[RMDB]
RNA sequence: GGGAACGACUCGAGUAGAGUCGAAAAGAUAUGGAUCCCGUAGGGAGGCUAAUGGUCGGAAACGACCAUAGCCGAGGAUCUACAGGGAUCCUAAGUCAAAAUCUCCUGACGUUCGCGUCAGGAGAAACGAGCAAAUAAAGUUCGCUUUAUUUGCUCGAAAAGAAACAACAACAACAAC
Reactivity to DMS in 0.01 (KOAc 150mM, MgCl2 10mM, bicine 150mM(pH8.5), 24C), signal-to-noise 3, nucleotides 027 to 126: g000a030u000a230u020g010g010a010u000c000c000c000g030u000a010g000g000g010a030g020g020c000u010a070a060u010g000g020u000c000g010g000a060a060a110c010g000a010c000c000a010u000a010g000c000c010g000a090g030g020a060u000c000u000a020c000a180g030g000g010a010u000c000c000u000a010a090g000u010c050a120a070a130a170u010c000u000c000c000u000g010a010c010g000u010u020c300g010c020g020u010c000a010g010g000a020g000a000a030a080
Reactivity to 2A3 in 0.01 (KOAc 150mM, MgCl2 10mM, bicine 150mM(pH8.5), 24C), signal-to-noise 3, nucleotides 027 to 126: g000a010u040a020u120g000g000a000u000c000c000c000g000u010a000g020g060g030a080g000g000c010u110a300a160u030g010g000u000c020g000g010a030a050a010c000g000a010c000c010a010u000a000g000c000c010g000a000g000g000a020u000c010u030a000c170a160g030g000g010a000u000c000c000u010a020a000g010u010c020a020a050a070a300u030c000u000c000c000u010g010a010c000g050u080u100c300g010c000g180u000c010a000g020g000a000g000a000a010a000
The record gives the reactivity of an RNA of 177 nucleotides to DMS and 2A3. It was measured as part of the RMDB library TTRDES. For DMS the reverse transcriptase was MarathonRT. Conditions: 150 mM KOAc, 10 mM MgCl2 and 150 mM bicine (pH 8.5), 24 C. For 2A3, 7,131 sequencing reads were counted.